[RMDB]
RNA sequence: GGGAACGACUCGAGUAGAGUCGAAAAAAGGCAGCUCUGUUGAGAGUUGCCAUGGUGGGGGGGGUUGACCCUGCGGGGGUCCCCAGGCCGUCAACUUCCGGUGCCAGACGUUGGUACGUCAGGGUCGGAUUUGCGUGGUGUUCGCACCACGCAAAUCAAAAGAAACAACAACAACAAC
Reactivity to 2A3 in 0.01 (KOAc 150mM, MgCl2 10mM, bicine 150mM(pH8.5), 24C), signal-to-noise 1, nucleotides 027 to 126: a000a000g000g010c000a000g000c000u000c000u030g300u230u300g080a020g000a000g050u020u020g040c000c000a000u020g000g060u100g000g030g000g000g000g000g000g000u000u010g020a020c000c080c000u000g010c020g030g110g000g000g120u210c020c050c000c000a000g030g090c060c000g000u000c000a010a010c000u020u020c140c010g000g000u040g050c000c000a020g040a220c140g060u070u090g170g020u090a020c030g000u040c130a100g020g000g080u060c070g000

This 177-nucleotide RNA was probed chemically with 2A3. 2A3 adducts were read by reverse transcription with SuperScript II with manganese. The RNA was probed in 150 mM KOAc, 10 mM MgCl2 and 150 mM bicine (pH 8.5) at 24 C. Reactivities are given for positions 27 through 126.